[RMDB]
RNA sequence: GGGAACGACUCGAGUAGAGUCGAAAAUACUUUGCAAUUGGAGUUGACAAACCAGGUAGAAAGAAUUCAAAUCCCCUUUCUGCCCUGUUGUGUGGUGCUGGGGAUCAUGCGUCGAAGAUGAAUAGUCAUAUUGUCAAACUUUCGAGUUUGACAAUAUAAAAGAAACAACAACAACAAC
Reactivity to DMS in 0.01 (KOAc 150mM, MgCl2 10mM, bicine 150mM(pH8.5), 24C), signal-to-noise 8, nucleotides 027 to 126: u010a070c060u010u000u010g010c070a110a110u010u000g010g010a080g010u000u000g010a090c090a090a100a100c080c050a050g010g010u000a020g010a030a030a040g000a080a090u010u000c180a060a100a110u010c040c060c040c020u000u000u000c030u000g000c020c010c080u000g010u000u000g010u000g020u010g010g020u000g000c060u000g000g010g010g010a050u000c060a040u010g010c070g020u000c060g000a070a080g000a050u010g000a070a080u010a090g000u000c110
Reactivity to 2A3 in 0.01 (KOAc 150mM, MgCl2 10mM, bicine 150mM(pH8.5), 24C), signal-to-noise 3, nucleotides 027 to 126: u070a030c030u100u080u050g050c030a050a210u050u100g070g000a030g030u040u040g040a040c000a020a100a020c030c030a020g030g000u020a010g040a050a040a010g040a050a040u210u130c030a040a060a170u050c040c030c000c000u000u020u000c010u020g020c000c000c000u070g000u160u100g080u020g020u030g020g000u040g020c040u040g030g010g030g000a020u040c010a040u090g040c000g020u020c040g020a030a040g060a090u120g030a080a110u080a070g070u060c030
About this RNA
An RNA of 177 nucleotides, treated with DMS and 2A3 and read out base by base. For DMS the reverse transcriptase was MarathonRT. High 2A3 reactivity points to a flexible backbone, as in loops and unpaired stretches. The data come from the RNA Mapping Database (RMDB), library OK2TRN. For 2A3, 3,002 sequencing reads were counted. In probing experiments dimethyl sulfate is read out at A N1 and C N3, which are open when not base-paired.